[RMDB]
RNA sequence: GGGAACGACUCGAGUAGAGUCGAAAACACCCCGCGUUCGCGCGGGGUGAAACAGGUAGUUGCUAUCUCAAUUACCUGAACAGGCCAUGGUCUGGAUAGGAAAAACUGAUGACUUCGGUCAUCAGAAGACUUAUUAUGCCUUCGGGCAUAAUAAGUCAAAAGAAACAACAACAACAAC
Reactivity to DMS in 0.01 (KOAc 150mM, MgCl2 10mM, bicine 150mM(pH8.5), 24C), signal-to-noise 2, nucleotides 027 to 126: c010a030c000c000c010c010g020c000g030u000u000c200g040c000g060c000g010g000g010g000u000g000a020a040a100c040a030g000g000u010a010g020u000u000g010c270u000a130u000c180u000c010a000a020u000u000a010c000c010u000g000a100a120c050a060g000g000c000c070a110u000g070g000u000c010u010g000g000a120u000a110g000g020a120a070a050a120a090c000u000g000a010u000g000a000c010u000u010c240g020g000u010c000a000u000c000a000g010a040a050
Reactivity to 2A3 in 0.01 (KOAc 150mM, MgCl2 10mM, bicine 150mM(pH8.5), 24C), signal-to-noise 2, nucleotides 027 to 126: c010a010c000c010c000c000g010c040g060u020u040c180g030c020g010c000g050g030g000g000u000g000a030a020a010c010a000g010g010u000a000g020u010u000g020c130u220a080u300c040u020c100a010a000u030u020a010c000c000u000g010a060a020c010a000g010g040c020c020a160u300g130g000u020c040u070g060g110a150u110a190g130g000a080a010a050a060a050c000u010g000a000u010g000a000c000u050u000c290g120g010u010c000a010u000c010a010g010a010a000
Chemical mapping of a 177-nucleotide RNA with DMS and 2A3. The 2A3 profile rests on 1,697 reads. Reactivities are rounded to 0.1 and cut off at 0 and 3. The RNA was probed in 150 mM KOAc, 10 mM MgCl2 and 150 mM bicine (pH 8.5) at 24 C.